[RMDB]
RNA sequence: GGGAACGACUCGAGUAGAGUCGAAAACAACUUUCCUCCCUACACAGUGACUCCAGCUUGGGAGGGGCAGGGCUAGGCUGAGCCAGCACUCCCUGUGGUGUCUGCCUGCCACGUGCAGCUCUGGAGUAAAACCUGGAGAAGUUCGCUUCUCCAGGAACUACUACCCAAUCUUCGGAUUGGGUAGUAGAAAAGAAACAACAACAACAAC
Reactivity to DMS in 0.01 (KOAc 150mM, MgCl2 10mM, bicine 150mM(pH8.5), 24C), signal-to-noise 1, nucleotides 027 to 156: c060a070a130c150u000u000u000c000c000u000c030c000c040u010a230c090a170c100a150g020u000g010a030c020u010c010c060a110g030c100u000u000g000g000g010a030g010g000g010g000c090a090g010g000g010c030u010a060g030g000c070u000g000a280g000c010c010a130g030c030a060c050u000c050c030c050u000g050u010g020g010u000g020u000c100u020g000c060c010u000g010c000c010a060c080g000u000g010c070a080g010c040u000c040u010g010g000a100g040u000a040a030a100a150c010c000u000g010g030a000g010a040a020g010u000u010c300g070c010u000u000c000u000c010c000a000g020g000a000a020
Reactivity to 2A3 in 0.01 (KOAc 150mM, MgCl2 10mM, bicine 150mM(pH8.5), 24C), signal-to-noise 4, nucleotides 027 to 156: c010a000a050c020u130u110u060c020c000u050c020c000c010u160a110c180a040c070a170g090u020g090a010c000u020c000c010a010g010c030u030u060g010g000g000a000g000g000g000g000c010a000g010g030g000c080u230a010g010g000c010u020g010a030g090c040c050a040g040c020a000c050u080c020c010c000u040g020u040g020g010u040g130u030c030u030g020c020c000u020g030c000c020a150c140g100u120g000c010a010g010c010u030c040u100g000g000a000g000u000a000a050a000a020c000c000u000g000g020a000g000a000a000g010u060u130c220g010c120u000u010c000u010c000c020a000g000g000a000a000
Chemical mapping of a 207-nucleotide RNA with DMS and 2A3. For DMS, 2,503 sequencing reads were counted. 2A3 adducts were read by reverse transcription with SuperScript II with manganese. The reactions ran in a buffer of 150 mM KOAc, 10 mM MgCl2 and 150 mM bicine (pH 8.5), at 24 C. DMS adducts were read by reverse transcription with MarathonRT.